[RMDB]
RNA sequence: GGGAACGACUCGAGUAGAGUCGAAAACGCUGGGACGUGGCAAGGCUUUUGACGAGACCACUGAAGCGCGCACGGUGGAAUCUCGAUAAGCCUUGUGACGUCCUGUGCUGAAGCGCGCACGGCAACCGAAAGGUGCGAGGUCGUACAUUCGUGUACGUAAGAGGGAUGUAUUCGUACAUCCCUCUUAAAAAGAAACAACAACAACAAC
Reactivity to DMS in 0.01 (KOAc 150mM, MgCl2 10mM, bicine 150mM(pH8.5), 24C), signal-to-noise 3, nucleotides 027 to 156: c060g010c010u010g000g000g000a040c020g030u000g030g040c000a010a070g010g050c000u000u020u000u010g040a170c040g010a030g020a210c000c010a030c020u000g010a060a070g010c000g010c000g090c000a300c020g000g040u000g000g000a070a160u000c010u000c070g030a140u000a060a060g020c000c010u000u010g040u000g000a020c010g020u000c010c010u000g000u000g000c030u000g030a080a130g010c040g020c020g030c000a290c050g020g030c090a130a120c020c030g010a160a140a150g020g010u000g000c030g010a130g010g000u000c020g000u000a020c010a100u000u000c180g040u000g020u000a000c020g020
Reactivity to 2A3 in 0.01 (KOAc 150mM, MgCl2 10mM, bicine 150mM(pH8.5), 24C), signal-to-noise 2, nucleotides 027 to 156: c090g020c030u060g020g010g010a000c000g010u000g090g000c000a000a000g020g040c020u020u030u110u150g110a090c080g000a000g000a010c000c000a000c020u010g060a170a030g010c000g020c010g010c030a000c020g050g000u030g000g040a220a160u070c000u000c000g030a080u130a180a010g000c010c040u010u000g000u040g010a000c010g000u000c000c000u000g000u000g010c020u060g000a070a050g010c020g020c000g020c000a010c030g100g000c070a040a160c020c010g070a120a050a020g000g010u050g010c040g010a100g040g130u130c010g010u000a010c000a020u070u140c160g030u030g000u050a000c020g020
Annotation: An RNA of 207 nucleotides, treated with DMS and 2A3 and read out base by base. Values cover nucleotides 27 to 156. Reactivities are rounded to 0.1 and cut off at 0 and 3. The RNA was probed in 150 mM KOAc, 10 mM MgCl2 and 150 mM bicine (pH 8.5) at 24 C.